[RMDB]
RNA sequence: GGGAACGACUCGAGUAGAGUCGAAAAGUUGAACAAUCCGAUGGGACAUAUCUUGGACCUAUGCCUGUGGAAAAUAUUCUUGAUAUGACGAAUUGGGUGAAGGGCAAAGCCAUCAUUGCUGCAACCGCAAUACUGACCCUUUCGAGGGUCAGUAUUGAAAAGAAACAACAACAACAAC
Reactivity to DMS in 0.01 (KOAc 150mM, MgCl2 10mM, bicine 150mM(pH8.5), 24C), signal-to-noise 5, nucleotides 027 to 126: g010u000u000g000a100a090c100a110a070u000c050c050g010a050u000g010g020g010a110c060a040u000a050u010c040u000u000g010g010a080c060c060u010a080u000g010c030c010u000g020u000g010g010a090a050a080a090u010a090u000u000c050u010u000g000a050u000a050u010g010a150c080g010a080a050u010u010g000g010g020u000g020a090a070g010g000g020c070a030a040a070g010c020c030a040u010c060a110u000u000g010c040u000g000c040a060a070c040c050g000
Reactivity to 2A3 in 0.01 (KOAc 150mM, MgCl2 10mM, bicine 150mM(pH8.5), 24C), signal-to-noise 3, nucleotides 027 to 126: g020u000u050g060a070a020c010a050a070u010c050c020g020a060u060g030g010g070a020c010a040u090a030u050c040u030u050g090g000a100c010c020u060a070u150g070c000c000u050g020u090g100g050a060a050a040a040u200a050u070u040c050u040u090g030a030u040a030u180g030a040c070g060a130a090u060u020g040g000g010u060g030a080a050g020g010g000c020a060a030a000g040c000c010a020u070c020a000u010u110g030c040u030g000c010a030a050c010c020g060